[RMDB]
RNA sequence: GGGAACGACUCGAGUAGAGUCGAAAAUAACCAUUACUAGUUAAGUGGUCUGGUCGUGCAAACCAUUGGGCAACGCGUACGCCUUGCGCGAAAACACUUUGGCUGGACACAACACCAAGCUGCCGAGCGUGUGUAACGGAUUCGUCCGUUACACACGAAAAGAAACAACAACAACAAC
Reactivity to 2A3 in 0.01 (KOAc 150mM, MgCl2 10mM, bicine 150mM(pH8.5), 24C), signal-to-noise 2, nucleotides 027 to 126: u070a030a020c020c000a040u080u130a080c090u050a030g190u150u100a180a010g040u020g030g060u030c040u020g030g030u020c050g030u060g000c010a050a040a070c020c020a030u050u090g030g020g000c010a030a030c030g030c010g050u030a020c080g080c040c030u060u100g000c030g000c010g050a050a020a010a000c050a020c000u040u030u040g020g000c030u020g050g040a060c030a000c000a020a090c020a000c010c000a030a020g040c020u050g000c020c030g080a060g090
Reactivity to DMS in 0.01 (KOAc 150mM, MgCl2 10mM, bicine 150mM(pH8.5), 24C), signal-to-noise 3, nucleotides 027 to 126: u010a150a200c010c030a100u010u010a090c110u000a110g000u000u000a060a090g010u000g000g010u010c070u000g020g010u000c080g020u000g000c040a110a070a070c050c040a070u010u000g010g000g010c040a080a190c020g000c010g010u000a060c120g030c130c020u010u010g000c000g000c010g000a060a040a050a070c080a060c030u000u000u000g020g000c040u000g000g000a120c050a030c030a070a070c190a050c040c040a060a050g010c050u000g020c030c030g010a140g020
Source: RMDB library OK2TRN, as collected in RNAgym.
An RNA of 177 nucleotides, treated with 2A3 and DMS and read out base by base.
The reactions ran in a buffer of 150 mM KOAc, 10 mM MgCl2 and 150 mM bicine (pH 8.5), at 24 C.
For 2A3 the reverse transcriptase was SuperScript II with manganese.
For DMS the reverse transcriptase was MarathonRT.